RNA sequence: GGGAACGACUCGAGUAGAGUCGAAAACAGAAGUGGAUGGGCCGUGUGCUUAACCAGGACAAGAUCUCCUUCUCUCCAACGUUGUUGCCAACUCAUGAUUCUCCUAACCUGUGCUUGGAGAGACGUGCUACCAUAUAGGUGUUCGCACCUAUAUGAAUACCACUAUCACUUUCGAGUGAUAGUGGUAAAAAGAAACAACAACAACAAC
Reactivity to 2A3 in 0.01 (KOAc 150mM, MgCl2 10mM, bicine 150mM(pH8.5), 24C), signal-to-noise 1, nucleotides 027 to 156: c050a000g030a110a030g020u060g040g000a130u020g040g000g070c060c120g160u170g040u150g040c090u100u110a040a070c010c000a040g000g010a000c120a190a020g020a150u020c040u010c020c000u000u000c020u020c000u000c010c050a090a020c140g020u000u000g000u040u020g020c030c070a050a000c180u020c000a020u080g110a290u130u020c040u050c010c000u060a060a110c000c040u130g030u200g100c050u020u040g020g000a060g000a000g000a030c030g020u010g000c010u040a110c000c020a010u000a000u000a000g020g000u000g030u000u000c060g030c090a020c000c020u000a000u000a000u000g000a010a000
Reactivity to DMS in 0.01 (KOAc 150mM, MgCl2 10mM, bicine 150mM(pH8.5), 24C), signal-to-noise 2, nucleotides 027 to 156: c060a110g000a060a120g030u000g020g020a130u000g020g010g010c030c030g000u000g020u010g040c010u010u000a090a070c070c030a080g040g020a100c020a090a140g010a160u000c010u000c090c030u020u000c010u010c010u010c020c000a070a120c120g000u000u010g010u000u010g010c000c050a080a130c040u010c030a040u000g020a100u000u020c010u010c010c000u000a040a040c020c040u000g000u000g000c070u000u010g010g000a020g000a030g030a020c040g030u010g030c050u000a170c030c010a030u000a010u000a000g040g040u000g020u000u010c300g030c010a000c020c000u000a000u010a010u000g000a090a150
Overview: This 207-nucleotide RNA was probed chemically with 2A3 and DMS. Values are in units of 0.01, from 0 to 300, in steps of 10. For DMS the reverse transcriptase was MarathonRT. The 2A3 profile rests on 722 reads.